[RMDB]
RNA sequence: GGGAACGACUCGAGUAGAGUCGAAAAGACGAUCCGCUUCAAGCCGCAUUCGCGUUUCCGCUUGGAAGGCCGCGACGUUCAUGUCGACCUUCCGGUCAGCAUUGACGAUGCGGUUCUGGGCGGCAAACUACUGGAAAAUAUUCGUAUUUUCCAGUAGAAAAGAAACAACAACAACAAC
Reactivity to DMS in 0.01 (KOAc 150mM, MgCl2 10mM, bicine 150mM(pH8.5), 24C), signal-to-noise 9, nucleotides 027 to 126: g010a150c140g000a130u010c010c010g010c010u000u010c040a060a030g010c010c010g010c010a060u010u000c040g020c030g000u000u000u000c070c100g010c090u010u010g030g000a020a010g000g020c110c070g010c040g010a080c060g020u010u000c240a090u010g010u000c010g010a100c000c000u000u000c100c070g000g010u000c080a060g010c150a060u000u000g010a070c020g010a060u000g010c000g000g000u000u000c080u000g000g000g010c000g000g000c300a030a060a140
Reactivity to 2A3 in 0.01 (KOAc 150mM, MgCl2 10mM, bicine 150mM(pH8.5), 24C), signal-to-noise 9, nucleotides 027 to 126: g090a010c060g040a100u050c020c020g000c030u210u240c050a010a010g010c000c000g010c010a040u130u130c040g000c020g050u020u060u020c060c030g010c070u050u170g010g010a010a010g030g000c100c060g210c040g040a000c010g060u130u280c130a100u270g010u020c000g000a010c000c000u050u010c010c010g000g020u080c030a010g010c020a060u020u140g030a070c000g010a010u020g000c000g000g000u010u000c000u000g000g010g010c000g000g000c000a020a040a020
This 177-nucleotide RNA was probed chemically with DMS and 2A3. For DMS, 48,122 sequencing reads were counted. The 2A3 profile rests on 59,260 reads. For DMS the reverse transcriptase was MarathonRT.